An RNA of 177 nucleotides, treated with DMS and 2A3 and read out base by base.
For 2A3, 23,285 sequencing reads were counted.
For DMS the reverse transcriptase was MarathonRT.
The RNA was probed in 150 mM KOAc, 10 mM MgCl2 and 150 mM bicine (pH 8.5) at 24 C.
[RMDB]
RNA sequence: GGGAACGACUCGAGUAGAGUCGAAAACAUGGAGUCUUCGGACUCCAUGCACUACCGAAAUAAUGCCUCGGUAUAAAAGGCAAACCCUUGGAAACAAGGGAACGAUGUCACGAUUCGUCGUGACAAACCUUUUUAGUGGAUUCGUCCACUAAAAAGGAAAAGAAACAACAACAACAAC
Reactivity to DMS in 0.01 (KOAc 150mM, MgCl2 10mM, bicine 150mM(pH8.5), 24C), signal-to-noise 6, nucleotides 027 to 126: c010a010u000g000g000a010g020u010c000u000u020c240g040g010a020c010u000c000c000a000u000g000c060a160c040u000a040c000c000g010a080a130a110u010a120a100u000g010c010c000u000c010g010g000u010a080u010a030a030a060a030g000g000c020a030a060a210c010c000c000u010u000g000g000a140a110a200c000a000a010g010g010g020a040a030c190g020a140u000g000u000c000a000c000g010a020u000u010c210g010u000c000g000u000g010a000c000a010a060a090
Reactivity to 2A3 in 0.01 (KOAc 150mM, MgCl2 10mM, bicine 150mM(pH8.5), 24C), signal-to-noise 7, nucleotides 027 to 126: c010a000u010g000g000a020g000u000c020u050u080c300g080g010a000c000u000c000c000a000u000g000c010a030c020u040a010c000c000g030a050a040a090u220a080a070u100g000c000c000u010c010g000g000u050a050u160a210a060a000a010g010g000c000a020a040a220c000c000c000u000u010g000g020a040a040a020c000a000a000g000g000g020a020a000c050g090a080u100g000u000c000a000c010g010a010u040u050c190g030u000c000g000u120g000a000c000a000a000a010